An RNA of 207 nucleotides, treated with 2A3 and read out base by base. It was measured as part of the RMDB library RNAMAK.

[RMDB]
RNA sequence: GGGAACGACUCGAGUAGAGUCGAAAAUCGCGUUCGCGCGAAAUAACACCUUUGUGUACCGAAACCCAUGGGAGCUACGUGAACCCAUUGGGUUCAAACGUAGCGAAGAACAUGGGAGAUAGCUGUACACUCUGGUAACUUAUCUAUUCGUAGAUAACUCGGAACCAAUUUUCGAAUUGGUUCCGAGAAAAGAAACAACAACAACAAC
Reactivity to 2A3 in 0.01 (KOAc 150mM, MgCl2 10mM, bicine 150mM(pH8.5), 24C), signal-to-noise 1, nucleotides 027 to 156: u020c000g000c000g070u030u110c100g010c000g000c050g110a030a100a010u200a080a120c130a010c060c000u000u000u000g040u000g000u010a000c020c030g010a050a050a110c010c000c010a010u000g000g000g000a070g040c010u010a000c000g000u010g000a000a000c060c000c040a250u170u300g000g000g010u000u000c000a000a000a000c000g000u020a000g000c010g000a050a000g030a000a020c010a010u000g000g130g000a010g040a020u290a030g060c020u010g010u000a010c000a000c010u010c000u000g000g000u030a050a110c050u050u030a010u000c010u010a030u070u150c150g020u110a080g050a090u130a080a110
The RNA was probed in 150 mM KOAc, 10 mM MgCl2 and 150 mM bicine (pH 8.5) at 24 C.